Source: RMDB libraries RFM100 and RFMREP, as collected in RNAgym. Structure probing data (2A3 and DMS) for a 177-nucleotide construct. Reactivities are given for positions 27 through 126. The RNA was probed in 150 mM KOAc, 10 mM MgCl2 and 150 mM bicine (pH 8.5) at 24 C. DMS adducts were read by reverse transcription with MarathonRT.
RNA sequence: GGGAACGACUCGAGUAGAGUCGAAAAGGGAACCUGGUUAUAAUAGCGGCGCUAUCAGAAAUUCAACGCUAUCAAAUUUUGAUGGUGAUGGGAACGGCGCUAGCAACAAACAUAUUUUAUGUACCUCUGUUUGUCCUAUAUUCGUAUAGGACAAACAAAAAGAAACAACAACAACAAC
Reactivity to 2A3 in 0.01 (KOAc 150mM, MgCl2 10mM, bicine 150mM(pH8.5), 24C), signal-to-noise 9, nucleotides 027 to 126: g050g000g010a010a040c020c020u040g040g060u140u070a120u060a200a170u150a070g000c000g020g010c000g000c020u020a050u200c040a050g160a120a100a030u070u030c010a030a030c010g000c000u010a000u000c010a010a170a240u280u300u130u070g000a010u010g010g040u010g010a090u070g060g020g020a070a040c060g020g000c000g000c000u030a050g020c010a000a040c010a020a100a000c020a030u110a150u050u180u070u050a060u070g030u040a030c000c020u030c050
Reactivity to DMS in 0.01 (KOAc 150mM, MgCl2 10mM, bicine 150mM(pH8.5), 24C), signal-to-noise 4, nucleotides 027 to 126: g010g020g020a070a130c030c040u010g000g000u000u000a070u040a080a120u000a170g020c000g000g010c040g000c020u000a100u010c140a190g010a100a090a090u020u000c040a050a060c040g000c000u000a020u010c000a010a140a260u010u030u020u000g020a010u010g010g010u000g010a050u020g000g000g000a100a100c120g010g010c010g020c010u000a030g050c040a070a060c220a080a060a080c050a060u000a080u020u010u020u010a040u000g000u000a070c040c010u000c110